[RMDB]
RNA sequence: GGGAACGACUCGAGUAGAGUCGAAAACUCUCGAGGAGACUCGAGAGAGCAUGCUUCGGCAUGCAAAGCUGCGCAUGUCCAGAACGGCUAUUCGCGCCCGCAGCGCAGCAUCCGUAGGAGGACGCACGUCCACACGGAUGGUGCAGGUUCUGACAGGCACUACUGCAUGCUUCGGCAUGCAGUAGUGAAAAGAAACAACAACAACAAC
Reactivity to 2A3 in 0.01 (KOAc 150mM, MgCl2 10mM, bicine 150mM(pH8.5), 24C), signal-to-noise 1, nucleotides 027 to 156: c000u000c000u000c010g010a000g000g030a040g020a020c000u000c000g000a000g000a010g000a010g000c000a000u000g000c000u030u030c220g060g000c000a010u010g000c000a050a040a000g010c010u010g000c000g000c000a060u030g000u000c050c030a000g010a010a000c010g000g010c000u050a130u130u160c070g010c050g000c090c000c000g000c010a000g000c000g000c000a000g060c000a000u000c000c000g020u050a130g030g080a210g030g000a010c000g000c040a060c150g020u000c010c000a010c010a000c010g000g000a000u010g050g110u000g000c050a050g010g020u010u010c000u000g010a000c010a010g020g050

Chemical mapping of a 207-nucleotide RNA with 2A3. Source: RMDB library OK3TST, as collected in RNAgym. Conditions: 150 mM KOAc, 10 mM MgCl2 and 150 mM bicine (pH 8.5), 24 C. 2A3 adducts were read by reverse transcription with SuperScript II with manganese. For 2A3, 1,063 sequencing reads were counted.